This 177-nucleotide RNA was probed chemically with DMS and 2A3.

RNA sequence: GGGAACGACUCGAGUAGAGUCGAAAAGAUAUGGACGACGACGCUACUCCCCACCUCGCUCGAUCGGAAACGAUCGCGAGAGGUAGCAUCAGUCCUAAGUCAAAAGACCUUUCUUCGGAAAGGUCAACGAAGUAAAACGGUUCGCCGUUUUACUUCGAAAAGAAACAACAACAACAAC
Reactivity to DMS in 0.01 (KOAc 150mM, MgCl2 10mM, bicine 150mM(pH8.5), 24C), signal-to-noise 4, nucleotides 027 to 126: g010a040u010a300u010g010g010a030c010g000a100c280g020a040c050g010c000u000a050c070u000c030c000c030c030a300c060c000u000c000g000c010u010c060g030a000u000c000g000g000a080a100a190c000g010a000u000c000g000c060g000a020g000a090g020g030u000a020g030c010a050u000c010a160g000u000c010c010u000a040a120g030u010c030a090a080a110a130g000a000c000c000u000u000u000c000u000u020c210g030g000a010a020a000g000g010u000c000a010a070
Reactivity to 2A3 in 0.01 (KOAc 150mM, MgCl2 10mM, bicine 150mM(pH8.5), 24C), signal-to-noise 1, nucleotides 027 to 126: g040a020u130a060u240g000g000a000c030g030a030c190g000a030c090g080c000u030a020c010u200c080c000c000c000a010c010c010u000c010g020c050u180c260g000a000u000c010g000g030a030a040a010c020g000a000u000c020g010c000g010a010g010a020g020g000u000a000g000c000a020u040c030a000g000u000c020c000u010a170a050g080u040c040a000a020a070a200g020a010c000c000u010u030u000c020u030u040c300g020g010a000a000a000g000g000u000c000a000a010